[RMDB]
Chemical mapping of a 177-nucleotide RNA with DMS and 2A3. It was measured as part of the RMDB libraries RFM100 and RFMREP. In probing experiments dimethyl sulfate is read out at A N1 and C N3, which are open when not base-paired. 2A3 is a SHAPE reagent: it acylates the 2'-hydroxyl of flexible nucleotides of all four kinds. Reactivities are rounded to 0.1 and cut off at 0 and 3. For DMS the reverse transcriptase was MarathonRT.
RNA sequence: GGGAACGACUCGAGUAGAGUCGAAAAUGGGCCCUUUCACAGGCCCUCCCCUCGGCAGUGGGGCCAGGAUUGGGUUGCUGGUGCUGAGAGAAAGCCCUUGAUUGCAUCCUUGCUCUGGGACUGUACCCUUAGGAUUUACUUUCGAGUAAAUCCUAAGAAAAGAAACAACAACAACAAC
Reactivity to DMS in 0.01 (KOAc 150mM, MgCl2 10mM, bicine 150mM(pH8.5), 24C), signal-to-noise 9, nucleotides 027 to 126: u020g010g010g010c010c010c040u010u040u020c180a120c300a300g000g000c000c000c000u000c020c010c000c040u010c080g000g010c040a030g010u010g000g010g000g000c020c030a040g010g010a070u020u010g010g010g010u000u000g020c060u000g000g010u020g010c010u000g000a150g010a140g010a100a130a080g000c000c010c010u010u010g000a090u010u010g000c040a070u000c040c050u010u000g000c030u000c010u010g000g010g010a100c030u000g000u010a120c100c110
Reactivity to 2A3 in 0.01 (KOAc 150mM, MgCl2 10mM, bicine 150mM(pH8.5), 24C), signal-to-noise 9, nucleotides 027 to 126: u070g000g000g010c020c010c000u040u290u110c140a130c030a020g000g000c000c000c000u020c000c000c000c000u040c030g050g000c010a060g060u030g020g020g010g010c010c020a020g030g020a080u150u240g060g010g040u050u070g070c100u090g020g060u160g030c020u030g040a050g010a020g050a220a090a020g020c010c010c000u030u090g080a110u050u120g040c010a020u040c010c010u010u040g000c000u000c010u040g060g020g050a040c010u020g030u140a130c020c010